[RMDB]
RNA sequence: GGGAACGACUCGAGUAGAGUCGAAAAAGCAAAGUUCUGUCUUUGUGGAAACCAGUAACUGUUCCUAAUGGCCUGCAACCGUGUGACACUUAAAAUAAAAUAAAAAUAAAAAUAAAAUGAUUGGUUCGCCAGUCAAAAAGAAACAACAACAACAAC
Reactivity to 2A3 in 0.01 (KOAc 150mM, MgCl2 10mM, bicine 150mM(pH8.5), 24C), signal-to-noise 1, nucleotides 027 to 135: a000g030c040a070a050a000g060u030u080c070u020g020u040c010u010u050u000g050u030g040g000a060a030a040c000c000a000g000u020a070a090c060u080g010u060u070c020c010u020a080a070u070g050g010c000c010u020g040c010a040a100c000c010g000u050g040u070g030a010c000a000c090u110u080a110a080a000a040u140a040a060a070a040u300a020a180a050a190a000u300a100a080a130a070a030u270a030a120a000a070u060g010a010u040u000g000g030u020u010c080g000c050c000a000g030u040c060a090a040

Structure probing data (2A3) for a 155-nucleotide construct. Values cover nucleotides 27 to 135. For 2A3 the reverse transcriptase was SuperScript II with manganese. High 2A3 reactivity points to a flexible backbone, as in loops and unpaired stretches.